[RMDB]
RNA sequence: GGGAACGACUCGAGUAGAGUCGAAAAGCAACGGGAGGGAGGCCGGAAGCGCGAACCGGCCAAACGCCCACCAUGGAAAGAGCACAAAAAGAAGUUGAAGUGCUCACAACUUCACCCUCCCAACAAAGUGUAAUACGUUGUUCGCAACGUAUUACACAAAAGAAACAACAACAACAAC
Reactivity to DMS in 0.01 (KOAc 150mM, MgCl2 10mM, bicine 150mM(pH8.5), 24C), signal-to-noise 1, nucleotides 027 to 126: g000c050a120a030c160g000g000g000a020g000g060g030a300g000g000c000c000g000g000a040a150g000c040g000c100g020a040a170c000c040g000g000c000c000a000a120a030c100g000c010c000c000a110c080c170a040u030g010g000a010a140a080g000a000g000c050a040c030a050a080a120a080a060g000a170a070g000u000u000g000a090a110g010u020g010c060u000c030a030c100a080a020c010u010u000c040a070c010c010c000u000c000c000c000a100a010c080a090a100a060
Reactivity to 2A3 in 0.01 (KOAc 150mM, MgCl2 10mM, bicine 150mM(pH8.5), 24C), signal-to-noise 2, nucleotides 027 to 126: g030c040a040a090c060g010g000g000a000g020g000g010a040g010g030c020c000g060g040a100a050g080c090g010c050g100a010a060c000c000g000g000c000c010a020a020a020c020g000c020c010c010a020c010c000a080u140g020g010a080a150a060g010a000g010c070a020c020a050a140a020a050a040g150a130a060g090u180u130g130a220a040g030u040g040c010u010c000a010c010a000a000c020u080u070c000a040c000c000c010u030c000c010c000a020a030c020a000a080a000
The data come from the RNA Mapping Database (RMDB), library M2PK90. An RNA of 177 nucleotides, treated with DMS and 2A3 and read out base by base. Conditions: 150 mM KOAc, 10 mM MgCl2 and 150 mM bicine (pH 8.5), 24 C. For 2A3 the reverse transcriptase was SuperScript II with manganese. The 2A3 profile rests on 1,637 reads.